Notes:
This 177-nucleotide RNA was probed chemically with 2A3 and DMS. For 2A3 the reverse transcriptase was SuperScript II with manganese. The data come from the RNA Mapping Database (RMDB), library OK2TST. For 2A3, 69,764 sequencing reads were counted.

[RMDB]
RNA sequence: GGGAACGACUCGAGUAGAGUCGAAAAAAGUGGACGCCACGUCGUUGCGCGAUCCUCAAACCGACGAAGAGCGCGUUAAGGACCCCAAGUUCUUGAUUGUGAUCGGUGUGUGCACUCACUUGGGUUGACAUUCUAUAUGAUUCGUCAUAUAGAAUGUAAAAGAAACAACAACAACAAC
Reactivity to 2A3 in 0.01 (KOAc 150mM, MgCl2 10mM, bicine 150mM(pH8.5), 24C), signal-to-noise 9, nucleotides 027 to 126: a000a010g040u040g000g010a020c030g010c010c000a020c030g200u090c040g080u150u060g040c030g000c010g070a190u020c010c000u020c010a100a110a050c040c030g020a020c050g050a100a060g040a020g090c040g000c010g020u030u030a020a010g020g010a020c010c020c010c030a030a020g010u020u020c010u030u050g050a080u070u250g050u060g080a090u050c020g000g030u030g010u020g030u080g030c040a010c020u040c000a020c000u020u030g060g010g000u050u080g030
Reactivity to DMS in 0.01 (KOAc 150mM, MgCl2 10mM, bicine 150mM(pH8.5), 24C), signal-to-noise 9, nucleotides 027 to 126: a060a050g020u000g010g010a060c040g010c010c010a040c040g010u010c110g020u010u000g010c120g020c020g000a110u000c020c040u000c050a050a100a100c100c070g010a060c130g010a080a070g010a150g010c040g020c030g010u000u000a030a030g010g000a040c030c040c110c150a080a200g000u000u000c030u000u000g000a040u000u010g030u000g000a080u000c020g010g010u000g010u000g010u010g020c060a050c030u000c020a030c020u000u000g000g010g010u000u000g010